[RMDB]
RNA sequence: GGGAACGACUCGAGUAGAGUCGAAAAGUCAGGACGUGCUUGCUGCGGUCAGCAACGCAGAAUACUACAAUCCACACGAGGUCCUUGGUGGACAUCUCGGAACUGGCAAAGGCGCUGGUACUGCCACAUAUUACUGGCUGUUCGCAGCCAGUAAUAUAAAAGAAACAACAACAACAAC
Reactivity to DMS in 0.01 (KOAc 150mM, MgCl2 10mM, bicine 150mM(pH8.5), 24C), signal-to-noise 5, nucleotides 027 to 126: g010u010c090a040g020g010a230c140g000u000g010c120u000u000g010c010u000g010c180g020g000u000c040a070g000c040a060a070c100g000c020a020g010a180a120u000a070c050u000a060c120a120a160u010c020c010a080c160a160c040g020a020g020g000u000c000c010u010u020g000g010u000g000g010a020c040a060u010c010u000c000g000g020a120a130c140u010g000g010c040a040a070a090g000g010c050g010c160u000g000g000u000a040c060u000g000c040c020a080c280
Reactivity to 2A3 in 0.01 (KOAc 150mM, MgCl2 10mM, bicine 150mM(pH8.5), 24C), signal-to-noise 3, nucleotides 027 to 126: g030u020c050a010g020g060a020c020g020u030g020c080u040u020g000c010u030g020c080g100g090u260c020a020g010c020a030a010c010g030c020a010g070a040a050u080a070c040u020a040c030a030a080u030c020c000a080c010a030c060g020a020g030g000u000c000c030u060u150g260g020u090g050g030a040c050a150u080c030u020c030g020g020a070a040c030u050g000g000c010a080a060a120g070g000c050g010c110u110g070g010u020a020c010u010g020c000c000a050c020